[RMDB]
The record gives the reactivity of an RNA of 177 nucleotides to 2A3 and DMS. The DMS profile rests on 7,043 reads. It was measured as part of the RMDB library OK2TST. The RNA was probed in 150 mM KOAc, 10 mM MgCl2 and 150 mM bicine (pH 8.5) at 24 C.

RNA sequence: GGGAACGACUCGAGUAGAGUCGAAAAGCUGCAACGCCCUGCCUCUUGAUGGGCGAUGCGGCGUGGUCGCUGAUUGCGGAAUUGAGGCGGGACGAGGCUGAAGCCUAUCUUCAGGACCGCAGAAGGAGCCUACUGAUAUGUUCGCAUAUCAGUAGGCAAAAGAAACAACAACAACAAC
Reactivity to 2A3 in 0.01 (KOAc 150mM, MgCl2 10mM, bicine 150mM(pH8.5), 24C), signal-to-noise 4, nucleotides 027 to 126: g000c010u000g000c000a030a010c010g000c000c000c000u030g030c010c030u100c050u130u200g120a110u160g040g000g000c000g000a010u010g000c020g010g000c010g020u040g030g070u130c070g020c180u080g060a140u090u080g020c000g000g040a040a040u050u040g010a020g010g000c000g000g030g000a040c050g020a020g020g030c040u070g090a070a010g010c000c020u060a130u060c000u030u030c020a010g010g030a020c010c010g000c020a020g040a060a040g070g030a030
Reactivity to DMS in 0.01 (KOAc 150mM, MgCl2 10mM, bicine 150mM(pH8.5), 24C), signal-to-noise 5, nucleotides 027 to 126: g000c010u000g010c010a030a110c000g020c000c000c010u000g000c030c040u000c070u000u000g020a120u010g010g010g020c000g010a030u000g020c020g000g010c010g030u000g000g020u000c070g010c030u010g000a130u010u000g010c010g020g010a090a170u020u010g010a040g000g000c300g000g000g010a060c110g000a050g010g010c010u010g000a100a110g010c030c020u000a130u010c020u000u000c010a030g010g000a300c030c010g000c020a060g010a140a070g000g000a200